[RMDB]
RNA sequence: GGGAACGACUCGAGUAGAGUCGAAAACAACCCGAUACUGGAAGAAGGCGUUGACCUCGUCGAAGUCACCGAGGUCGACGAGUUCGCCGUUGAGGGUGGCCGUCGACUCGUUGACAUCCGUCGCGGGGAGGUCAGUAUAGUUCGCUAUACUGACCUCAAAAGAAACAACAACAACAAC
Reactivity to 2A3 in 0.01 (KOAc 150mM, MgCl2 10mM, bicine 150mM(pH8.5), 24C), signal-to-noise 3, nucleotides 027 to 126: c020a020a050c020c000c000g010a030u030a100c150u280g030g010a120a060g020a050a030g260g010c000g050u070u090g050a080c010c000u010c020g010u000c050g080a150a050g100u080c020a000c040c040g010a030g000g180u020c010g010a000c000g050a050g020u060u160c020g000c030c000g060u110u160g160a140g130g000g000u020g000g000c020c000g100u110c020g020a020c000u000c010g010u030u110g020a000c010a090u070c050c100g000u020c030g000c020g000g010g030
Reactivity to DMS in 0.01 (KOAc 150mM, MgCl2 10mM, bicine 150mM(pH8.5), 24C), signal-to-noise 4, nucleotides 027 to 126: c120a150a220c000c000c000g010a150u000a020c070u030g020g000a100a070g010a120a100g010g000c060g000u000u000g000a090c060c040u010c020g000u000c060g000a090a080g000u000c070a050c100c010g000a030g020g010u010c010g000a010c010g000a060g020u020u010c010g020c000c010g000u020u000g000a280g010g010g020u000g010g020c040c040g020u000c020g000a070c010u000c010g010u010u000g000a040c040a110u000c070c080g000u000c040g000c030g000g000g000